[RMDB]
RNA sequence: GGGAACGACUCGAGUAGAGUCGAAAACAUGGGCCCCAGUUCCGAACGAAGAGACCGCCGGGGAAGGGGGGCGAACCGACGGGAGUUCAAUGGUAAAGAGGCGAAGAACCUCGGAGGUUCCCUCCCAACACGUCUCCCUUCGGGGAGACGAAAAGAAACAACAACAACAAC
Reactivity to DMS in 0.01 (KOAc 150mM, MgCl2 10mM, bicine 150mM(pH8.5), 24C), signal-to-noise 2, nucleotides 027 to 129: c070a190u020g020g000g000c110c020c010c100a000g010u040u010c040c000g080a120a170c050g010a070a000g030a160g010a050c050c060g040c080c090g030g030g000g030a000a000g050g020g020g030g040g020c130g030a010a060c010c010g020a210c000g010g040g000a090g000u010u000c050a070a140u040g010g010u060a070a080a140g000a120g000g060c060g000a060a140g030a030a010c020c010u030c030g020g010a100g000g060u000u000c010c020c020u040c000c000c000a040a030c160a110
Reactivity to 2A3 in 0.01 (KOAc 150mM, MgCl2 10mM, bicine 150mM(pH8.5), 24C), signal-to-noise 4, nucleotides 027 to 129: c050a020u120g030g010g020c000c000c000c010a020g020u070u040c010c030g050a050a040c020g000a040a010g020a020g040a080c000c000g040c000c010g010g000g010g020a040a080g030g010g000g000g000g000c130g010a000a000c020c000g060a040c000g000g000g000a240g000u000u030c040a060a030u070g100g020u080a050a070a030g040a050g100g060c120g020a090a030g000a100a090c000c010u000c000g000g010a020g000g000u020u030c000c000c000u000c000c000c000a010a010c040a000
Chemical mapping of a 170-nucleotide RNA with DMS and 2A3. For 2A3, 6,599 sequencing reads were counted. For DMS, 8,715 sequencing reads were counted. The reactions ran in a buffer of 150 mM KOAc, 10 mM MgCl2 and 150 mM bicine (pH 8.5), at 24 C.